RNA sequence: GGGAACGACUCGAGUAGAGUCGAAAAGCAAGAUGCUUCGGCAUCUUGCAGUCGUAGCGCGAUCGACAGAAUUACAGCUAUGUCGAACGUGGAAGAGCGCGCACAUCAUCCCUUUCGAGGGAUGAAAUGAUCAUCGUCUAUUCGUAGACGAUGAUCAAAAAGAAACAACAACAACAAC
Reactivity to DMS in 0.01 (KOAc 150mM, MgCl2 10mM, bicine 150mM(pH8.5), 24C), signal-to-noise 3, nucleotides 027 to 126: g000c000a000a000g010a000u000g010c010u000u010c220g030g000c000a000u000c000u000u000g020c000a040g030u010c080g030u000a090g010c010g000c010g010a110u000c000g010a020c020a010g010a160a150u000u010a110c270a110g030c090u010a070u000g000u000c010g020a020a050c100g000u000g000g020a120a050g000a100g000c010g000c030g010c040a080c200a170u000c000a000u000c000c000c000u000u000u000c070g000a020g030g010g010a000u000g000a010a050a090
Reactivity to 2A3 in 0.01 (KOAc 150mM, MgCl2 10mM, bicine 150mM(pH8.5), 24C), signal-to-noise 1, nucleotides 027 to 126: g010c010a000a000g010a000u010g010c000u040u090c190g170g000c020a010u000c000u020u010g000c010a000g000u010c050g030u060a030g080c000g020c010g030a020u020c000g010a010c020a010g050a030a010u140u150a150c070a170g020c110u120a030u130g000u010c000g000a040a030c020g060u110g060g080a080a010g030a000g060c030g000c030g030c020a050c000a050u000c010a000u000c000c000c000u000u060u020c210g060a010g000g000g010a000u010g000a020a030a020
Annotation:
The data come from the RNA Mapping Database (RMDB), library M2PK50. Structure probing data (DMS and 2A3) for a 177-nucleotide construct. DMS adducts were read by reverse transcription with MarathonRT. Conditions: 150 mM KOAc, 10 mM MgCl2 and 150 mM bicine (pH 8.5), 24 C. For 2A3, 1,739 sequencing reads were counted.